[RMDB]
RNA sequence: GGGAACGACUCGAGUAGAGUCGAAAAGAAGGUAUGAACGUUGGAAGGCGCUUCCGUGUGAGCGGAAUUCUUUCAUACCAAGAGGAGUUGGCGGACGGAUGUGGCCGAACGGGAUAACCGGAAGAAAGGGUAUAAGAUACUUCGGUAUCUUAUACCCAAAAGAAACAACAACAACAAC
Reactivity to 2A3 in 0.01 (KOAc 150mM, MgCl2 10mM, bicine 150mM(pH8.5), 24C), signal-to-noise 3, nucleotides 027 to 126: g050a070a000g040g010u000a030u040g020a070a000c030g010u060u080g100g050a150a020g050g010c010g010c010u050u000c000c020g030u090g020u060g130a050g000c060g000g070a030a020u040u010c030u020u180u010c070a070u060a120c010c010a000a000g030a000g040g010a020g030u060u060g170g000c020g000g100a000c010g010g000a010u020g010u050g010g020c010c010g000a020a000c000g000g000g000a020u030a090a100c010c020g010g080a030a000g050a020a060a010
Reactivity to DMS in 0.01 (KOAc 150mM, MgCl2 10mM, bicine 150mM(pH8.5), 24C), signal-to-noise 4, nucleotides 027 to 126: g000a280a130g000g000u010a060u020g030a270a080c090g010u010u000g000g030a060a050g000g000c030g010c050u000u000c000c020g000u010g000u040g020a200g000c040g000g010a010a010u010u000c010u010u000u000c030a100u020a070c300c250a150a110g000a040g020g000a070g010u000u000g000g010c020g020g010a020c030g010g020a060u000g010u000g010g010c000c000g010a040a080c010g000g000g000a100u030a090a040c000c020g010g010a130a080g030a060a140a130
The record gives the reactivity of an RNA of 177 nucleotides to 2A3 and DMS. The data come from the RNA Mapping Database (RMDB), library OK1LIB. 2A3 adducts were read by reverse transcription with SuperScript II with manganese. For 2A3, 1,777 sequencing reads were counted. For DMS the reverse transcriptase was MarathonRT.